[RMDB]
RNA sequence: GGGAACGACUCGAGUAGAGUCGAAAACUGAACUUGGUAUCUGGAGUGCCCCUGCUAAAGUGAAUGCAGUACCGAAUAUUAUGGUCCACUGCGGUUCUCGCUCUAAACUGAAUCGUAUGAACAAUGACGAUCAAAAUGGCUUCGGCCAUUUUGAUCGAAAAGAAACAACAACAACAAC
Reactivity to 2A3 in 0.01 (KOAc 150mM, MgCl2 10mM, bicine 150mM(pH8.5), 24C), signal-to-noise 1, nucleotides 027 to 126: c030u040g000a030a030c050u110u100g000g010u070a070u040c070u080g000g090a050g030u050g100c000c030c000c010u000g000c050u130a100a070a090g020u060g220a030a000u090g020c000a030g060u040a030c000c030g000a120a050u200a120u300u130a080u260g000g000u000c020c000a020c000u000g000c000g050g000u060u000c030u000c030g020c070u000c000u120a170a160a060c030u030g030a020a040u020c000g030u100a070u080g130a080a030c030a030a160u180g020a030
Reactivity to DMS in 0.01 (KOAc 150mM, MgCl2 10mM, bicine 150mM(pH8.5), 24C), signal-to-noise 1, nucleotides 027 to 126: c060u000g030a070a100c120u000u010g000g010u000a050u040c020u020g040g010a200g020u000g000c090c010c010c040u020g010c070u000a070a090a150g000u000g010a100a030u000g000c030a040g000u010a050c020c010g030a090a080u000a120u000u010a090u020g010g020u000c060c150a040c020u000g010c030g010g020u000u000c010u000c070g010c100u010c090u030a110a070a100c060u000g000a040a060u000c030g000u000a030u030g020a070a050c150a090a090u010g010a180